[RMDB]
RNA sequence: GGGAACGACUCGAGUAGAGUCGAAAAGUCCAGCGCCCGAUGGCCCAGGCUGCCGUUGCGCCGGCGGCGGUGACGACGCCGCGGUUAACGAUCUGACGCAGCAAUGGCGCGUCCAGCGAGGGCGUAGGACUCACCUAGCGUUCGCGCUAGGUGAGUCAAAAGAAACAACAACAACAAC
Reactivity to 2A3 in 0.01 (KOAc 150mM, MgCl2 10mM, bicine 150mM(pH8.5), 24C), signal-to-noise 1, nucleotides 027 to 126: g060u030c020c010a030g040c020g000c000c020c030g080a120u080g060g020c000c040c020a030g030g080c030u010g010c010c000g020u010u000g020c050g000c060c090g100g060c000g030g000c070g000g030u070g070a050c130g020a010c000g000c000c000g000c010g000g020u050u030a020a040c060g000a070u080c080u200g080a050c090g000c030a040g000c000a050a220u100g010g010c060g030c000g070u050c070c020a040g020c070g100a150g010g000g030c010g010u000a020g010
Reactivity to DMS in 0.01 (KOAc 150mM, MgCl2 10mM, bicine 150mM(pH8.5), 24C), signal-to-noise 2, nucleotides 027 to 126: g020u010c000c000a300g010c000g030c010c000c030g000a120u000g010g010c050c010c080a140g000g020c020u000g050c060c030g010u000u000g000c110g010c020c030g030g010c020g010g000c010g000g000u030g010a090c220g000a110c030g000c000c010g000c010g000g060u010u000a050a150c120g000a120u010c130u020g000a050c120g000c010a060g010c030a090a060u010g010g000c070g000c080g000u020c100c070a060g020c070g000a280g010g010g000c010g030u000a060g030